Overview
Chemical mapping of a 207-nucleotide RNA with 2A3. Values cover nucleotides 27 to 156.
[RMDB]
RNA sequence: GGGAACGACUCGAGUAGAGUCGAAAAGUAUAGAAGCAUGAGACCGCAUGCGUUAUACGAUGAAUCGCGGUCGAAUCCGUUGUGCGAAAGCACUUCGGUAAUGCAUAUCGGUAGGCAGAUCUGCCCGGAUCAGCUACCGUAAUUAGUACGGGCAAGAGCGCGUAAUAUACUUCGGUAUAUUACGCGCAAAAGAAACAACAACAACAAC
Reactivity to 2A3 in 0.01 (KOAc 150mM, MgCl2 10mM, bicine 150mM(pH8.5), 24C), signal-to-noise 1, nucleotides 027 to 156: g100u090a090u150a300g110a060a000g000c000a000u000g000a010g000a010c000c010g050c060a020u270g010c030g040u070u130a100u020a180c070g000a010u140g110a130a140u080c090g000c000g000g010u000c000g000a020a000u030c010c030g000u000u000g000u000g020c000g020a100a000a000g000c000a000c000u020u020c000g000g000u040a000a000u000g010c000a010u120a040u150c010g010g000u000a020g170g190c110a030g000a010u010c010u030g000c000c000c000g000g000a000u000c000a000g010c000u030a000c000c000g000u020a000a050u020u070a040g120u030a080c100g000g020g060c030a060a010g060a020